Structure probing data (2A3 and DMS) for a 177-nucleotide construct.
DMS adducts were read by reverse transcription with MarathonRT.
The DMS profile rests on 3,621 reads.
Reactivities are given for positions 27 through 126.
RNA sequence: GGGAACGACUCGAGUAGAGUCGAAAAGAUAUGGACGUACAUGGGAGCUCCUUCGGAAACGAAGAGCGAAGAACAUGACGUCCUAAGUCAAAACACAGUCAAUAUGCUUCGGCAUAUUGACUGUGAAGUGUAUCCAAAUGUUCGCAUUUGGAUACACAAAAGAAACAACAACAACAAC
Reactivity to 2A3 in 0.01 (KOAc 150mM, MgCl2 10mM, bicine 150mM(pH8.5), 24C), signal-to-noise 4, nucleotides 027 to 126: g030a010u040a040u120g000g000a000c000g000u170a210c030a010u000g010g040g010a030g010c010u160c060c040u040u000c020g020g030a050a050a050c010g000a010a000g000a000g020c000g060a120a030g030a030a000c010a000u010g010a000c010g000u000c010c000u000a020a020g030u010c020a040a030a110a080c000a010c000a000g000u000c000a010a010u010a000u000g040c010u070u180c300g160g000c020a000u010a010u000u010g000a000c000u000g000u000g000a000a010
Reactivity to DMS in 0.01 (KOAc 150mM, MgCl2 10mM, bicine 150mM(pH8.5), 24C), signal-to-noise 4, nucleotides 027 to 126: g010a030u010a300u000g010g000a020c000g030u000a130c000a010u010g000g000g000a200g010c000u000c130c080u000u000c000g010g000a090a080a160c010g010a000a020g000a000g010c030g000a060a110g020a140a170c000a010u000g000a040c020g010u000c000c000u020a010a070g000u000c020a060a110a080a220c000a010c000a000g000u000c000a010a030u000a000u000g000c000u000u020c210g030g000c010a010u010a000u000u000g010a000c000u000g000u000g000a010a040